[RMDB]
RNA sequence: GGGAACGACUCGAGUAGAGUCGAAAAGAUAUGGAGACUGUACGAGCGAGGAUCUCGGAAACGAGGGAGCUCGUGUACUGGUCUCCUAAGUCAAACUAACUUUUUCCGUUCGCGGAAAAAGUUAGAACUAAGAAACAACCUUCGGGUUGUUUCUUAGAAAAGAAACAACAACAACAAC
Reactivity to DMS in 0.01 (KOAc 150mM, MgCl2 10mM, bicine 150mM(pH8.5), 24C), signal-to-noise 1, nucleotides 027 to 126: g010a050u010a260u020g000g000a030g020a040c000u010g010u010a030c010g020a070g040c000g000a060g000g000a090u020c010u000c000g010g000a080a160a190c000g010a040g000g000g010a120g020c020u010c000g040u010g030u010a040c030u020g010g000u000c000u020c000c000u020a000a070g010u000c070a090a070a300c000u000a000a010c000u000u000u010u000u000c000c000g050u010u010c220g030c000g020g000a000a000a000a000a010g010u000u010a010g000a090a300